This 177-nucleotide RNA was probed chemically with DMS. Reactivities are given for positions 27 through 126. Conditions: 150 mM KOAc, 10 mM MgCl2 and 150 mM bicine (pH 8.5), 24 C.
RNA sequence: GGGAACGACUCGAGUAGAGUCGAAAAAAAAAGAUAUGGACGACCAGAGAGGGAGCUUAACGUAACAUCUACUCGGAAACGAGUAGUGGUUAAGCGAAGAACUCUUUGGUCGUCCUAAGUCAAAAAAGAAUACUCUUAACUUCGGUUAAGAGUAUUCAAAAGAAACAACAACAACAAC
Reactivity to DMS in 0.01 (KOAc 150mM, MgCl2 10mM, bicine 150mM(pH8.5), 24C), signal-to-noise 2, nucleotides 027 to 126: a030a050a080a080a060g010a000u010a300u000g000g010a000c020g020a040c000c000a000g000a010g000a030g000g030g000a120g000c000u000u000a010a000c000g000u000a020a020c250a010u010c000u000a010c000u000c010g010g010a090a140a120c000g000a010g010u000a000g010u000g020g010u000u000a000a000g010c000g000a090a190g000a080a100c010u000c000u000u010u000g000g010u000c010g000u000c000c000u000a010a050g000u020c010a000a070a120a040a090a120